[RMDB]
RNA sequence: GGGAACGACUCGAGUAGAGUCGAAAAAAAGAUAUGGAUGAUGCAGAGCCUACGAUUGUGCGAUGAAACAAAUCGGAAACGAUUUGUGGAGCAUAGAGUAGGCGACGAAGCAUCAUCCUAAGUCAAACAUUACCUCGUACUUCGGUACGAGGUAAUGAAAAGAAACAACAACAACAAC
Reactivity to DMS in 0.01 (KOAc 150mM, MgCl2 10mM, bicine 150mM(pH8.5), 24C), signal-to-noise 4, nucleotides 027 to 126: a080a080a160g000a030u010a300u010g000g010a000u000g010a010u000g020c000a100g000a240g020c010c000u010a000c000g000a300u010u010g060u000g010c000g000a110u020g000a250a130a020c000a000a000a000u000c000g000g010a150a070a170c010g010a010u000u000u010g000u000g000g000a040g000c000a010u000a020g000a300g010u010a000g010g010c010g020a050c170g000a090a130g010c010a000u000c000a010u000c000c000u010a010a070g000u000c030a140a100a260
Reactivity to 2A3 in 0.01 (KOAc 150mM, MgCl2 10mM, bicine 150mM(pH8.5), 24C), signal-to-noise 3, nucleotides 027 to 126: a000a000a010g120a040u160a070u120g010g010a000u010g000a000u010g000c020a020g040a030g070c000c010u010a040c050g220a300u130u250g000u000g000c030g300a300u060g040a040a000a000c010a010a010a020u010c020g000g000a040a090a050c000g000a010u000u000u000g000u010g000g010a010g000c040a000u010a050g040a010g000u030a000g000g000c000g010a000c010g000a060a000g000c000a000u000c000a000u020c010c010u010a050a030g040u000c040a080a040a030
An RNA of 177 nucleotides, treated with DMS and 2A3 and read out base by base. For DMS, 4,537 sequencing reads were counted.